[RMDB]
RNA sequence: GGGAACGACUCGAGUAGAGUCGAAAAACUUUUAGGGAUUAUCGUUAUAGAAAUGUCCUUGGCAUAUCGCUAUGCACAGAGGUAUUAGUAGCGCAAUAGCUAUUGAAGGACAUUACCUCUCAAAUAAGUUCACCUUCUGAUUCGUCAGAAGGUGAACAAAAGAAACAACAACAACAAC
Reactivity to DMS in 0.01 (KOAc 150mM, MgCl2 10mM, bicine 150mM(pH8.5), 24C), signal-to-noise 2, nucleotides 027 to 126: a060c040u000u020u000u000a030g010g000g020a090u000u000a130u010c050g000u010u030a100u020a100g000a030a050a050u000g010u000c020c020u000u000g020g000c020a040u000a020u020c100g000c070u000a000u000g000c090a100c150a080g020a010g020g000u000a050u000u000a070g020u000a000g020c040g010c150a090a060u000a070g010c000u020a010u000u000g010a040a050g020g020a040c050a010u000u000a060c070c050u000c030u000c100a070a050a110u010a080a060
Reactivity to 2A3 in 0.01 (KOAc 150mM, MgCl2 10mM, bicine 150mM(pH8.5), 24C), signal-to-noise 2, nucleotides 027 to 126: a020c060u080u110u060u160a100g040g000g010a030u040u060a040u150c030g010u060u120a120u020a210g040a010a020a000u000g010u000c000c000u000u030g030g000c030a020u000a030u260c010g000c030u000a010u020g040c030a050c040a120g160a050g170g040u100a120u100u080a090g030u020a000g000c000g050c040a040a090u060a070g000c000u020a040u060u170g050a030a000g040g000a010c000a010u010u020a030c000c000u000c040u020c020a050a040a070u120a160a030